[RMDB]
RNA sequence: GGGAACGACUCGAGUAGAGUCGAAAAAAAAAAGAUAUGGAAUAGACCCACUCCAAUGAGCCAAUGAUGACCUCUCGGAAACGAGAGGUUUGAGGCUCAUAACGAGUGCUAUUCCUAAGUCAAAAAAGAUAAGCUUAGAGUUCGCUCUAAGCUUAUCAAAAGAAACAACAACAACAAC
Reactivity to DMS in 0.01 (KOAc 150mM, MgCl2 10mM, bicine 150mM(pH8.5), 24C), signal-to-noise 2, nucleotides 027 to 126: a000a030a170a060a130a070g000a000u000a270u000g000g000a050a030u000a000g000a300c180c300c090a030c000u000c000c080a230a100u000g000a020g020c010c020a150a100u020g000a180u000g000a000c010c000u000c010u010c000g000g000a030a000a120c000g000a000g000a010g050g010u000u000u000g020a090g030g020c000u000c000a000u000a050a040c300g000a010g050u000g000c000u000a000u020u000c000c020u010a020a270g000u020c010a000a040a110a090a040a100
Conditions: 150 mM KOAc, 10 mM MgCl2 and 150 mM bicine (pH 8.5), 24 C. This 177-nucleotide RNA was probed chemically with DMS. The DMS profile rests on 1,158 reads. Values cover nucleotides 27 to 126.